[RMDB]
Overview:
Chemical mapping of a 207-nucleotide RNA with 2A3 and DMS. The RNA was probed in 150 mM KOAc, 10 mM MgCl2 and 150 mM bicine (pH 8.5) at 24 C. For 2A3, 1,613 sequencing reads were counted. Values cover nucleotides 27 to 156. For DMS, 1,848 sequencing reads were counted.
RNA sequence: GGGAACGACUCGAGUAGAGUCGAAAACAUUUCGAAUUCAGUCGCAAAUUGUAGAAUUAGCUACUCUACGAUUUAGUGAGCGUUAGUAACGUUGUAAUAUAAUAUAGUCUUUGGAAGGAUUAUAUUGGAGCCGCGGACAAGUUCGCUUGUCCGCGAAUCAGUGUAUUUGGUUCGCCAAAUACACUGAAAAAGAAACAACAACAACAAC
Reactivity to 2A3 in 0.01 (KOAc 150mM, MgCl2 10mM, bicine 150mM(pH8.5), 24C), signal-to-noise 3, nucleotides 027 to 156: c030a030u190u220u230c060g100a060a110u170u090c060a090g100u080c010g000c010a010a010a010u000u020g000u000a000g010a010a030u060u040a020g040c020u070a030c020u010c000u010a000c000g010a010u000u010u090a080g010u050g050a080g040c020g030u070u140a080g050u080a100a040c070g000u000u030g050u050a100a110u060a090u010a150a020u010a000u000a030g020u000c020u090u160u120g130g050a090a090g040g000a020u000u000a010u010a010u010u030g020g060a050g080c050c010g000c020g000g000a000c000a010a000g000u020u120c140g040c100u010u000g000u000c000c010g000c000g000a000a000
Reactivity to DMS in 0.01 (KOAc 150mM, MgCl2 10mM, bicine 150mM(pH8.5), 24C), signal-to-noise 1, nucleotides 027 to 156: c040a200u000u000u000c020g040a040a170u010u000c060a110g010u000c050g050c030a010a020a060u010u000g000u000a020g020a050a060u010u000a220g060c280u000a020c040u000c010u010a010c030g010a030u000u000u000a090g030u000g000a070g010c050g000u010u010a090g000u000a080a070c050g000u000u000g030u000a060a160u010a130u000a030a010u000a030u000a030g020u000c000u000u000u010g000g000a150a200g030g010a020u000u000a010u000a010u000u000g020g010a170g000c100c020g070c000g010g000a020c010a010a010g010u010u010c300g010c010u010u000g010u020c000c000g110c020g000a010a040